This 177-nucleotide RNA was probed chemically with 2A3 and DMS.
Source: RMDB library RFMREP, as collected in RNAgym.
Reactivities are given for positions 27 through 126.
The reactions ran in a buffer of 150 mM KOAc, 10 mM MgCl2 and 150 mM bicine (pH 8.5), at 24 C.
For 2A3, 1,348 sequencing reads were counted.
RNA sequence: GGGAACGACUCGAGUAGAGUCGAAAAUGCCAAGCAACAUCGUCUAGAUCUUAAAUAUAAGAUCAAGCCGAAGUUGGUUUGCUGCACUUUGCUGGGAGAUUAGAUUAGUUUCCUCUUUUAGUUUGGCGAUUCAAUGGUACUUCGGUACCAUUGAAUCAAAAGAAACAACAACAACAAC
Reactivity to 2A3 in 0.01 (KOAc 150mM, MgCl2 10mM, bicine 150mM(pH8.5), 24C), signal-to-noise 2, nucleotides 027 to 126: u080g020c000c000a020a010g020c000a010a010c000a050u020c030g020u010c000u000a020g000a000u000c000u030u090a190a300a260u300a190u020a090a000g010a010u000c000a020a000g000c030c000g020a020a010g000u020u010g030g260u040u000u030g030c040u050g000c030a010c030u040u030u030g010c000u030g060g210g010a070g010a080u110u130a150g120a240u060u050a020g170u040u010u000c060c000u090c100u070u230u040u100a060g030u040u050u080g030g000c040
Reactivity to DMS in 0.01 (KOAc 150mM, MgCl2 10mM, bicine 150mM(pH8.5), 24C), signal-to-noise 1, nucleotides 027 to 126: u000g020c020c010a060a010g000c000a020a000c010a080u010c010g000u010c000u000a060g050a010u000c000u000u000a050a150a220u000a100u010a020a010g000a020u000c000a090a040g000c020c000g010a000a010g000u010u000g010g000u000u000u000g000c070u000g000c030a040c040u010u000u000g000c070u000g010g010g020a080g010a070u000u010a070g000a130u010u000a070g000u000u000u000c000c010u000c160u000u000u030u010a080g000u020u000u000g000g020c290
For 2A3 the reverse transcriptase was SuperScript II with manganese.